[RMDB]
RNA sequence: GGGAACGACUCGAGUAGAGUCGAAAAUGUACGUGCGGGAGUACAUGCGGGAGCAGGACCGCAAGCCCCGGAAUGCCACGCCCGCGCCACUGCGGGAGGCGCCCAGCGCCAACGCGUCCGUGGAGCGGCCUUAGAGAGUAUUCGUACUCUCUAAGGCAAAAGAAACAACAACAACAAC
Reactivity to DMS in 0.01 (KOAc 150mM, MgCl2 10mM, bicine 150mM(pH8.5), 24C), signal-to-noise 9, nucleotides 027 to 126: u000g010u000a020c020g010u010g020c050g010g000g020a300g010u000a030c030a050u000g000c020g010g000g000a120g010c090a100g000g000a140c030c020g010c040a090a120g010c080c010c010c070g010g010a080a070u010g010c040c060a100c100g010c030c030c010g010c000g010c040c100a040c070u010g010c010g000g000g010a190g010g010c010g010c010c130c150a100g010c010g020c010c010a060a160c060g000c020g010u000c080c080g010u000g000g000a110g010c080g010
Reactivity to 2A3 in 0.01 (KOAc 150mM, MgCl2 10mM, bicine 150mM(pH8.5), 24C), signal-to-noise 9, nucleotides 027 to 126: u080g010u020a010c040g040u070g080c040g020g040g020a080g030u020a020c020a050u060g020c010g010g030g010a130g110c060a070g060g130a060c010c020g010c040a040a040g020c000c000c000c000g020g080a140a070u150g060c030c010a060c050g030c000c000c000g000c010g020c040c030a080c050u110g000c000g010g050g050a070g010g000c000g000c040c140c050a040g020c000g000c010c010a050a030c040g020c010g080u040c070c030g000u040g000g010a050g020c040g030